[RMDB]
An RNA of 177 nucleotides, treated with 2A3 and DMS and read out base by base. The RNA was probed in 150 mM KOAc, 10 mM MgCl2 and 150 mM bicine (pH 8.5) at 24 C. For 2A3 the reverse transcriptase was SuperScript II with manganese. Values cover nucleotides 27 to 126.

RNA sequence: GGGAACGACUCGAGUAGAGUCGAAAAUAACAUCGUAGUGUAAGACGAAAAGUCAACGUCGCUUGCCAGGAGGACCACCAAAGGAAUACGCUUCGGUAACUACUCGAGAUCCCAAGCGAUAACACAAACUUUGCAGCUUAUUCGUAAGCUGCAAAGUAAAAGAAACAACAACAACAAC
Reactivity to 2A3 in 0.01 (KOAc 150mM, MgCl2 10mM, bicine 150mM(pH8.5), 24C), signal-to-noise 1, nucleotides 027 to 126: u030a020a000c000a010u020c060g020u040a130g020u010g000u140a090a020g040a040c010g130a000a130a090a040g040u020c140a060a050c060g060u000c010g000c010u010u040g030c070c050a050g060g050a050g010g070a010c020c010a010c020c020a070a040a000g040g000a050a080u040a110c070g010c010u030u010c020g000g000u030a120a160c000u020a000c010u000c010g000a000g020a030u010c000c000c000a000a000g080c020g090a080u090a140a010c030a000c010a030a150
Reactivity to DMS in 0.01 (KOAc 150mM, MgCl2 10mM, bicine 150mM(pH8.5), 24C), signal-to-noise 1, nucleotides 027 to 126: u010a120a060c130a060u000c040g000u000a030g060u000g000u010a030a170g020a050c010g000a020a070a000a100g000u010c060a020a060c100g020u010c030g010c100u000u010g030c000c030a050g000g000a160g020g000a050c070c050a020c080c100a030a080a040g000g000a040a140u000a060c160g000c170u000u000c040g000g000u010a030a060c030u010a020c000u020c020g000a030g000a090u000c000c030c000a050a090g000c070g000a040u010a000a060c260a050c210a060a050